[RMDB]
RNA sequence: GGGAACGACUCGAGUAGAGUCGAAAACAGAAUCACUUCGGUGAUUCUGAAAGAAAGAAGAUAACGCGCGACGACGAGCGCGAAAUAAAUAAAUCGUCGUAAAAAUCGAGUCCUUCGGGACUCGAAACGUCCUUUCUAUCUUCGGAUAGAAAGGACGAAAAGAAACAACAACAACAAC
Reactivity to 2A3 in 0.01 (KOAc 150mM, MgCl2 10mM, bicine 150mM(pH8.5), 24C), signal-to-noise 1, nucleotides 027 to 126: c000a000g030a000a000u010c010a010c000u050u060c180g170g000u000g000a010u000u000c000u000g000a020a000a030g050a000a080a000g110a050a020g070a170u220a220a060c000g010c000g000c000g070a010c020g010a000c020g000a000g000c010g000c010g020a020a090a030u080a010a020a000u110a000a050a000u020c010g000u000c000g000u010a090a000a000a000a000u020c000g010a000g000u000c010c010u060u120c240g040g030g010a010c010u000c000g010a000a000a000

Source: RMDB library M2PK50, as collected in RNAgym. Structure probing data (2A3) for a 177-nucleotide construct. The 2A3 profile rests on 1,414 reads.